Structure probing data (DMS) for a 177-nucleotide construct. The data come from the RNA Mapping Database (RMDB), library OK2TRN.
RNA sequence: GGGAACGACUCGAGUAGAGUCGAAAAAGUCUACAUAUGAUGAGAAACUAUCUUCUCAGUUUUGUUUUUUAUUAAGUUUUUGUCAUAUGCAAAGCUUGGUGAUUAGAGUGAAGAAGCUGGAACAACAGACGUAUUGGGUAUUCGUACCCAAUACGUCAAAAGAAACAACAACAACAAC
Reactivity to DMS in 0.01 (KOAc 150mM, MgCl2 10mM, bicine 150mM(pH8.5), 24C), signal-to-noise 1, nucleotides 027 to 126: a060g010u000c030u000a110c000a020u000a040u000g000a060u000g010a040g000a050a050a100c060u000a070u000c120u000u010c040u000c040a080g000u000u010u020u010g000u000u000u000u020u020u000a030u020u000a010a020g000u000u000u000u000u010g010u010c060a010u000a050u000g020c020a020a080a090g020c010u000u000g000g000u000g010a080u000u030a070g000a100g020u010g010a070a080g000a060a100g040c060u000g000g020a030a040c050a060a070c150a140